[RMDB]
RNA sequence: GGGAACGACUCGAGUAGAGUCGAAAAGCAACGCAAAGCCGCGGCAAGUGGAGUUUGCGAGAAGAGACUAGGCUUUGGUUUCUUCAAGUGAAGCGGUCACCAAUCAGGUGUGGUAGUUACCGUAAAAAUAACCGCUCUUUGUUCGCAAAGAGCGGAACCUCAUUCUAUAGUUCGCUAUAGAAUGAGGAAAAGAAACAACAACAACAAC
Reactivity to DMS in 0.01 (KOAc 150mM, MgCl2 10mM, bicine 150mM(pH8.5), 24C), signal-to-noise 3, nucleotides 027 to 156: g040c030a070a120c030g020c020a080a060a110g010c000c020g020c050g020g040c130a080a170g020u000g000g000a120g030u000u000u000g020c030g000a270g010a030a030g000a030g000a020c000u000a100g030g010c130u000u000u000g010g000u000u010u010c010u010u000c010a050a300g000u000g000a060a160g000c030g020g010u000c030a060c040c010a080a100u010c120a140g000g040u000g010u000g020g010u010a060g040u000u000a030c020c000g030u000a010a050a070a090a120u000a090a180c000c000g000c000u000c000u000u010u000g020u000u000c270g040c000a040a020a010g000a030g000c010g010g010a000a010
Reactivity to 2A3 in 0.01 (KOAc 150mM, MgCl2 10mM, bicine 150mM(pH8.5), 24C), signal-to-noise 4, nucleotides 027 to 156: g040c020a040a050c020g000c030a030a020a010g030c020c010g020c030g120g060c180a150a090g010u020g030g060a120g040u010u060u020g020c020g010a040g010a010a010g020a000g000a010c010u040a040g090g200c040u140u130u120g030g020u010u020u010c000u010u020c030a060a040g040u060g110a090a020g010c010g020g000u030c020a010c000c010a040a100u190c060a060g050g100u100g030u050g140g040u040a080g010u060u090a020c000c010g020u060a060a010a070a010a030u140a080a060c000c000g010c000u000c000u000u000u010g020u040u050c120g010c110a000a000a000g000a000g000c000g000g000a000a000
About this RNA
Source: RMDB library M2RFPK, as collected in RNAgym. An RNA of 207 nucleotides, treated with DMS and 2A3 and read out base by base. For DMS, 7,172 sequencing reads were counted. For 2A3, 5,931 sequencing reads were counted. 2A3 adducts were read by reverse transcription with SuperScript II with manganese. The reactions ran in a buffer of 150 mM KOAc, 10 mM MgCl2 and 150 mM bicine (pH 8.5), at 24 C. DMS adducts were read by reverse transcription with MarathonRT.